[RMDB]
RNA sequence: GGGAACGACUCGAGUAGAGUCGAAAAGAUAUGGAUGCGCUUCCUCUCGUAUAGCUUUUGACGAGCGACCCAUCGGAAACGAUGGCGAGCUCGAUAAGCUAUGACGAGAGGAAGCGCAUCCUAAGUCCUAAGUCACGAACUUCGGUUCGUGACUUAGAAAAGAAACAACAACAACAAC
Reactivity to DMS in 0.01 (KOAc 150mM, MgCl2 10mM, bicine 150mM(pH8.5), 24C), signal-to-noise 1, nucleotides 027 to 126: g010a090u000a200u000g030g010a000u000g030c000g010c020u000u000c000c000u000c000u000c000g000u010a030u010a010g020c000u000u000u010u000g000a200c130g010a010g010c000g000a300c300c030c000a000u050c000g000g010a140a200a300c000g000a020u000g030g000c000g000a300g010c000u010c020g000a000u000a010a010g040c000u000a040u010g010a000c000g040a040g010a030g000g010a020a020g010c000g060c000a000u000c000c000u000a000a120g000u000c030
The record gives the reactivity of an RNA of 177 nucleotides to DMS. DMS adducts were read by reverse transcription with MarathonRT. The data come from the RNA Mapping Database (RMDB), library TTRINS. The RNA was probed in 150 mM KOAc, 10 mM MgCl2 and 150 mM bicine (pH 8.5) at 24 C.